An RNA of 177 nucleotides, treated with DMS and 2A3 and read out base by base. DMS adducts were read by reverse transcription with MarathonRT. The reactions ran in a buffer of 150 mM KOAc, 10 mM MgCl2 and 150 mM bicine (pH 8.5), at 24 C. It was measured as part of the RMDB library OK2TST.

RNA sequence: GGGAACGACUCGAGUAGAGUCGAAAAAGAAGGUGAAGACGUGGAAAUGACAGAUGAGGGAGCAAAGGCUGAACAAGAACCAGAAGUAGAUCCUGUUCCAUAUAUUACAAAGGAGCAUUUCGCAGAAACUAAAUUAGUACUUCGGUACUAAUUUAGUAAAAGAAACAACAACAACAAC
Reactivity to DMS in 0.01 (KOAc 150mM, MgCl2 10mM, bicine 150mM(pH8.5), 24C), signal-to-noise 9, nucleotides 027 to 126: a070g010a080a060g000g010u000g010a080a060g010a080c130g020u010g000g000a060a060a090u000g010a100c080a060g010a080u010g010a090g010g000g000a070g010c080a050a080a080g020g000c050u000g010a060a060c110a070a080g000a080a080c080c050a070g000a060a060g010u010a070g010a070u000c040c040u000g010u000u000c020c020a050u010a060u000a070u010u010a090c160a060a100a090g000g000a040g010c030a060u010u000u000c070g010c140a110g000a100a080
Reactivity to 2A3 in 0.01 (KOAc 150mM, MgCl2 10mM, bicine 150mM(pH8.5), 24C), signal-to-noise 5, nucleotides 027 to 126: a010g050a010a000g020g010u050g030a040a010g030a030c050g030u060g020g040a030a090a070u090g020a030c020a030g060a060u080g010a070g010g030g010a030g000c020a040a030a010g040g000c020u020g010a030a010c030a060a040g020a040a030c040c010a020g010a090a010g060u090a030g010a030u030c000c020u030g000u030u000c010c000a030u070a010u020a030u240u090a080c080a050a080a040g020g000a030g020c020a020u040u060u050c090g010c050a020g100a090a110